[RMDB]
RNA sequence: GGGAACGACUCGAGUAGAGUCGAAAAAAAAAGAUAUGGACCAAGGACUCCUUGGAUUUAUAGGGUUGCUAUAUCGGAAACGAUAUAGCUCCCUAUUGUCAGGAGGACUUGGUCCUAAGUCAAAAAACUCCCUAAUCUAGUUCGCUAGAUUAGGGAGAAAAGAAACAACAACAACAAC
Reactivity to DMS in 0.01 (KOAc 150mM, MgCl2 10mM, bicine 150mM(pH8.5), 24C), signal-to-noise 2, nucleotides 027 to 126: a080a020a080a100a110g000a060u000a300u000g000g020a020c000c000a020a000g000g000a150c010u000c000c000u000u020g010g010a000u000u040u000a010u010a020g000g000g010u000u000g010c000u010a020u010a020u000c000g020g000a110a090a220c010g000a010u000a000u000a010g020c010u000c000c000c000u010a000u010u000g000u000c010a010g010g000a000g020g020a050c000u020u000g000g000u000c000c000u000a010a100g000u000c030a000a040a090a070a040a080
This 177-nucleotide RNA was probed chemically with DMS.